Chemical mapping of a 177-nucleotide RNA with 2A3 and DMS. The 2A3 profile rests on 1,649 reads. The RNA was probed in 150 mM KOAc, 10 mM MgCl2 and 150 mM bicine (pH 8.5) at 24 C.
RNA sequence: GGGAACGACUCGAGUAGAGUCGAAAAGGCCGAGCUCCAACCCAGGGAGGGAAUAUAUACAAGGGGCGAUUUAAGGAGCAAGUAUGUAUAGGGAAGUGAAGAAGCUCCGAAAACUUCACACGGCCGAGGGCAUAUAAUUAUUCGUAAUUAUAUGCCCAAAAGAAACAACAACAACAAC
Reactivity to 2A3 in 0.01 (KOAc 150mM, MgCl2 10mM, bicine 150mM(pH8.5), 24C), signal-to-noise 2, nucleotides 027 to 126: g000g000c010c000g030a030g000c010u010c020c010a130a120c010c000c040a020g090g090g050a120g000g050g030a130a000u150a000u020a010u010a110c060a110a130g000g010g010g000c040g000a020u100u090u260a130a060g030g020a040g000c060a040a030g070u070a150u230g060u000a070u040a090g090g010g040a100a000g030u010g030a030a000g020a050a030g010c020u000c040c010g010a030a010a030a000c010u020u040c000a010c000a010c020g000g000c010c010g000a070
Reactivity to DMS in 0.01 (KOAc 150mM, MgCl2 10mM, bicine 150mM(pH8.5), 24C), signal-to-noise 4, nucleotides 027 to 126: g000g020c000c010g020a160g010c020u000c010c010a120a150c010c000c020a190g000g000g000a060g020g010g010a110a060u010a060u000a040u010a040c110a080a150g000g000g010g010c070g010a080u000u010u010a080a120g010g000a030g020c060a130a140g010u000a050u010g020u000a040u000a130g000g000g000a090a090g000u000g010a030a040g000a160a150g000c030u010c010c030g010a050a060a040a090c010u000u000c020a030c030a230c020g010g010c000c010g010a080
Background: For DMS, 3,952 sequencing reads were counted.